[RMDB]
RNA sequence: GGGAACGACUCGAGUAGAGUCGAAAAGUGCAGCGAGACGUGGGGCUUUACUUCUCUAGCUCCAGCUACCAAGAAGUUAAAGACAAAAUACUGAUCUGUCCCGGAGAGUUACGUGAUGAGGUGGCCACUAGUCUACGCUAUUCGUAGCGUAGACUAGAAAAGAAACAACAACAACAAC
Reactivity to 2A3 in 0.01 (KOAc 150mM, MgCl2 10mM, bicine 150mM(pH8.5), 24C), signal-to-noise 2, nucleotides 027 to 126: g050u050g020c040a020g000c030g030a040g030a050c030g020u070g020g070g090g040c000u070u050u030a020c000u020u020c020u000c020u030a010g000c020u040c050c000a010g000c000u000a020c000c080a050a020g010a010a010g020u090u170a060a030a000g060a060c050a010a200a000a010u140a050c030u030g010a150u040c010u060g030u020c000c010c010g020g040a050g000a010g010u040u140a030c060g050u010g040a050u090g010a000g050g000u010g000g010c010c000a020
Reactivity to DMS in 0.01 (KOAc 150mM, MgCl2 10mM, bicine 150mM(pH8.5), 24C), signal-to-noise 5, nucleotides 027 to 126: g020u000g020c020a060g020c050g010a080g000a070c090g030u000g000g010g030g010c020u010u000u000a040c030u000u000c020u000c110u010a040g020c010u020c160c200a160g010c030u000a030c160c160a100a050g010a030a030g000u010u010a020a040a040g000a110c110a080a050a060a050u010a050c090u000g000a110u000c060u010g000u000c020c020c030g010g000a080g000a090g000u000u000a060c110g010u020g000a070u000g000a090g010g020u010g010g010c020c130a170